An RNA of 177 nucleotides, treated with 2A3 and DMS and read out base by base.
It was measured as part of the RMDB library OK1LIB.
The reactions ran in a buffer of 150 mM KOAc, 10 mM MgCl2 and 150 mM bicine (pH 8.5), at 24 C.
DMS adducts were read by reverse transcription with MarathonRT.
2A3 adducts were read by reverse transcription with SuperScript II with manganese.
For DMS, 3,744 sequencing reads were counted.

[RMDB]
RNA sequence: GGGAACGACUCGAGUAGAGUCGAAAAUAUGCACGCCGGUGCAGGUGAGUACGCGUGUAUGGUGUUCGUGACUCCCACGAGCUUUUCGCUGUCGCGCGCUGUUUCAAGAGUCGCGCUGCGCCACCGAAGUCGCUGUUGGAUUCGUCCAGCAGUGGCUAAAAGAAACAACAACAACAAC
Reactivity to 2A3 in 0.01 (KOAc 150mM, MgCl2 10mM, bicine 150mM(pH8.5), 24C), signal-to-noise 4, nucleotides 027 to 126: u150a000u010g000c010a000c000g010c030c060g100g000u040g000c010a020g120g010u110g060a170g030u070a050c030g000c000g000u000g010u000a110u140g120g000u010g000u020u010c000g010u020g090a100c030u050c090c030c010a010c020g010a010g000c000u060u040u050u060c030g000c010u050g050u160c030g000c000g000c010g000c040u040g070u100u140u100c080a100a030g030a030g100u120c000g010c000g020c020u040g010c010g020c010c010a040c010c030g040a020
Reactivity to DMS in 0.01 (KOAc 150mM, MgCl2 10mM, bicine 150mM(pH8.5), 24C), signal-to-noise 2, nucleotides 027 to 126: u030a300u000g000c010a010c090g000c060c300g000g010u030g010c010a140g000g000u120g000a300g000u000a090c180g000c020g030u010g000u000a040u090g020g040u000g000u020u000c020g010u010g000a080c100u000c010c050c020a140c140g000a020g030c030u000u000u000u000c060g000c000u020g010u030c070g000c040g000c120g040c040u000g000u020u010u040c070a120a080g000a300g000u000c030g000c000g010c020u000g000c010g010c000c000a050c050c050g000a020